[RMDB]
RNA sequence: GGGAACGACUCGAGUAGAGUCGAAAAGCGGCUUUCAGCUUCGCCGUAGAAAGGUAUUUCCAGCGUUGCUCGCGCGUUGGCCAGACAAACACCGGACGAUGUGCCGCGCCACCGGGCUGUUCACGGGGGAAUGAUAGUGAUUCGUCACUAUCAUUCCAAAAGAAACAACAACAACAAC
Reactivity to 2A3 in 0.01 (KOAc 150mM, MgCl2 10mM, bicine 150mM(pH8.5), 24C), signal-to-noise 6, nucleotides 027 to 126: g020c010g040g020c060u100u300u280c110a060g030c010u100u050c030g000c000c020g020u050a040g120a060a090a000g080g010u090a120u050u100u040c020c000a010g010c010g030u060u170g040c060u050c090g060c000g000c000g030u010u050g020g020c010c010a080g030a080c070a030a160a020c050a040c050c060g040g050a070c020g030a040u040g070u120g070c010c010g020c010g000c000c000a010c000c000g030g020g000c060u030g010u050u060c040a020c050g050g010g040
Reactivity to DMS in 0.01 (KOAc 150mM, MgCl2 10mM, bicine 150mM(pH8.5), 24C), signal-to-noise 6, nucleotides 027 to 126: g020c020g000g000c040u000u010u010c190a140g010c060u000u000c060g010c020c020g020u010a090g010a050a120a070g010g000u000a080u000u000u000c010c010a050g010c030g020u010u000g020c030u010c130g020c060g000c020g020u000u010g010g000c120c110a090g000a100c130a050a050a110c140a100c080c030g010g000a070c060g010a050u000g010u000g010c020c020g020c030g000c030c030a080c040c010g000g000g010c020u000g010u000u010c030a050c040g010g000g000